[RMDB]
RNA sequence: GGGAACGACUCGAGUAGAGUCGAAAAGCAUGUUUAUGUGAACCUAAGUAUGAAUUUCAGUGACUGUAGAUUAGAAGAACUGAUUAUAGCAUCGGCUGCUUGGUGUUCACUUUAUUUGCAUCUGUGAGUUUCCAACAAGCCCUAAGUUUACUGACAAGGUGAUUUACUAGUUCGCUAGUAAAUCACCAAAAGAAACAACAACAACAAC
Reactivity to DMS in 0.01 (KOAc 150mM, MgCl2 10mM, bicine 150mM(pH8.5), 24C), signal-to-noise 1, nucleotides 027 to 156: g010c010a070u010g020u000u000u010a040u020g020u000g010a080a000c030c000u000a030a060g020u000a070u010g020a090a100u000u000u000c040a040g030u000g000a130c020u000g020u010a090g020a150u000u000a070g010a090a180g030a150a160c040u000g020a060u000u000a080u010a080g000c030a130u020c050g010g040c000u000g030c020u000u000g020g060u030g010u000u000c010a020c010u000u000u000a050u000u000u000g010c060a120u010c110u000g000u000g040a120g030u000u020u010c020c030a040a150c070a090a080g020c020c010c030u000a020a180g000u010u000u010a070c060u010g000a140c070a060a270
Reactivity to 2A3 in 0.01 (KOAc 150mM, MgCl2 10mM, bicine 150mM(pH8.5), 24C), signal-to-noise 4, nucleotides 027 to 156: g020c000a010u040g030u010u100u060a130u160g000u010g010a020a020c000c010u020a020a020g010u030a060u260g090a160a110u100u130u070c020a020g030u020g180a150c040u040g050u150a050g080a270u120u090a050g090a250a010g040a130a060c000u010g010a010u010u030a080u070a070g040c030a080u110c050g110g010c020u010g000c000u020u010g040g000u130g010u010u000c000a000c000u000u050u010a040u000u040u040g010c020a030u000c030u050g030u020g040a040g010u010u070u040c030c000a040a050c060a080a000g030c000c010c020u050a090a020g000u010u060u060a170c030u020g070a040c070a120a140